The data come from the RNA Mapping Database (RMDB), library OK1LIB. The record gives the reactivity of an RNA of 177 nucleotides to DMS and 2A3. High DMS reactivity at an A or C suggests that its Watson-Crick edge is free. DMS adducts were read by reverse transcription with MarathonRT.

[RMDB]
RNA sequence: GGGAACGACUCGAGUAGAGUCGAAAAUUCGAGACCAGCCUGACCAACAUGGUGGAAACCCGUCUCUACUAAAAAUACCAAAAUUAGCCAGGCGUGGUGGUAGGUGCCUGUAGUCCCAGCUACUCAGAUAUGACCGAGGUUUCGACCUCGGUCAUAUAAAAGAAACAACAACAACAAC
Reactivity to DMS in 0.01 (KOAc 150mM, MgCl2 10mM, bicine 150mM(pH8.5), 24C), signal-to-noise 1, nucleotides 027 to 126: u010u020c000g000a100g000a070c030c000a030g040c000c000u000g000a100c020c080a140a110c130a120u040g000g010u060g000g000a020a070a100c080c070c020g000u000c000u010c030u000a030c060u000a030a030a000a030a100u000a100c040c000a140a130a140a120u040u010a130g000c060c030a000g000g000c080g000u010g000g110u000g000g020u000a130g000g000u000g010c020c060u000g000u020a080g010u000c000c030c000a070g000c010u000a010c030u010c130a050g010
Reactivity to 2A3 in 0.01 (KOAc 150mM, MgCl2 10mM, bicine 150mM(pH8.5), 24C), signal-to-noise 1, nucleotides 027 to 126: u000u000c030g050a000g000a000c000c000a050g000c000c000u000g010a060c010c010a000a100c000a060u150g010g000u050g070g010a070a200a130c000c000c080g080u050c010u030c040u020a010c010u170a050a010a050a130a130u300a170c020c020a000a190a100a000u120u080a070g070c080c040a000g020g010c100g120u010g000g040u000g000g140u040a000g000g100u120g040c000c000u000g000u000a000g020u000c000c000c000a030g240c000u060a060c050u050c060a050g000